[RMDB]
Structure probing data (2A3 and DMS) for a 177-nucleotide construct. The DMS profile rests on 1,349 reads. Values cover nucleotides 27 to 126. 2A3 adducts were read by reverse transcription with SuperScript II with manganese. DMS adducts were read by reverse transcription with MarathonRT.

RNA sequence: GGGAACGACUCGAGUAGAGUCGAAAAGAUAUGGAGACGCUAAGGGCUAUGAAGUGUGUGAUAGCUGUAACUAUAUCGGAAACGAUAUAGUUACCGAAACACAUGGAGCCUAUGCGUCUCCUAAGUCCAAUCAACCUCUCUUCGGAGAGGUUGAUUGAAAAGAAACAACAACAACAAC
Reactivity to 2A3 in 0.01 (KOAc 150mM, MgCl2 10mM, bicine 150mM(pH8.5), 24C), signal-to-noise 1, nucleotides 027 to 126: g000a000u000a020u060g000g010a000g000a020c040g020c010u030a130a300g060g000g040c080u160a300u300g020a010a000g000u010g020u000g020u050g090a160u210a300g290c300u190g020u000a010a010c000u000a000u000a000u000c000g000g010a010a010a000c000g000a000u000a000u000a040g000u010u000a000c010c000g030a220a160a010c000a000c000a000u040g000g000a000g000c000c000u020a020u010g000c000g010u000c010u000c000c000u000a000a010g010u090c000
Reactivity to DMS in 0.01 (KOAc 150mM, MgCl2 10mM, bicine 150mM(pH8.5), 24C), signal-to-noise 2, nucleotides 027 to 126: g000a010u000a050u020g000g000a000g040a030c000g020c020u000a090a300g020g000g020c000u000a280u010g000a180a250g010u000g000u000g000u000g010a180u000a180g010c170u000g000u000a020a000c020u000a000u000a000u000c000g000g010a020a000a040c000g000a010u000a000u000a000g000u000u000a000c000c050g000a070a150a020c000a000c000a020u000g000g000a030g000c000c000u000a290u020g010c010g000u000c000u010c000c000u000a000a040g000u000c000